[RMDB]
RNA sequence: GGGAACGACUCGAGUAGAGUCGAAAAUGAGCGCAGCGCCAUCGUUGGCGAAUAACGCAGCGACAGCUGCACCAAGCAGCACUAUCCAGGUGAACAGCAAGCGUCCGCGACCAUUGCCCCAGCGGGAGAAUAGGUUAGAGUUCGCUCUAACCUAUUCAAAAGAAACAACAACAACAAC
Reactivity to DMS in 0.01 (KOAc 150mM, MgCl2 10mM, bicine 150mM(pH8.5), 24C), signal-to-noise 8, nucleotides 027 to 126: u010g010a100g020c030g020c020a180g010c020g010c030c060a090u000c100g030u000u010g030g020c020g010a140a100u010a110a120c090g010c020a040g000c010g010a100c250a100g000c000u000g010c010a050c070c060a100a130g010c080a070g010c050a100c090u000a080u000c060c060a090g000g010u000g010a060a070c050a080g010c030a110a100g000c040g020u010c040c050g010c020g010a070c040c020a040u000u000g000c090c010c000c060a100g000c080g010g000g020a230
Reactivity to 2A3 in 0.01 (KOAc 150mM, MgCl2 10mM, bicine 150mM(pH8.5), 24C), signal-to-noise 4, nucleotides 027 to 126: u090g010a050g010c020g000c020a020g020c010g010c020c010a070u070c090g100u060u100g180g020c030g030a040a080u190a150a020c040g010c010a010g000c000g040a020c040a050g010c010u010g000c000a010c030c030a070a040g040c050a000g030c030a010c060u120a110u080c040c020a020g000g030u030g040a130a050c010a030g030c030a100a050g000c010g060u060c050c060g010c010g040a090c000c020a050u020u080g040c010c000c000c000a020g060c070g030g050g010a140